[RMDB]
Conditions: 150 mM KOAc, 10 mM MgCl2 and 150 mM bicine (pH 8.5), 24 C. The record gives the reactivity of an RNA of 177 nucleotides to DMS.
RNA sequence: GGGAACGACUCGAGUAGAGUCGAAAAGACGUGCUCCCGCCCGAGCGCGCGGUGCAGAUCAUCGCCGAGACCGCGACCGCGCUGGACUUCGCGCACGCGGGCGGGGUCCUGCACCGUGAUGUGAAAAGCAUGGGGUGGUAUUCGUACCACCCCAUGCAAAAGAAACAACAACAACAAC
Reactivity to DMS in 0.01 (KOAc 150mM, MgCl2 10mM, bicine 150mM(pH8.5), 24C), signal-to-noise 2, nucleotides 027 to 126: g000a050c140g010u000g010c040u000c010c000c050g000c030c030c000g020a070g010c010g000c010g020c010g070g030u010g000c010a010g000a030u000c080a300u000c000g030c010c040g000a160g000a100c260c130g010c000g010a060c130c120g040c140g000c000u000g000g000a060c100u000u000c020g020c030g050c010a090c090g000c000g020g000g010c030g000g000g020g010u000c060c060u000g000c000a040c050c020g000u000g000a120u020g040u000g000a130a080a120a120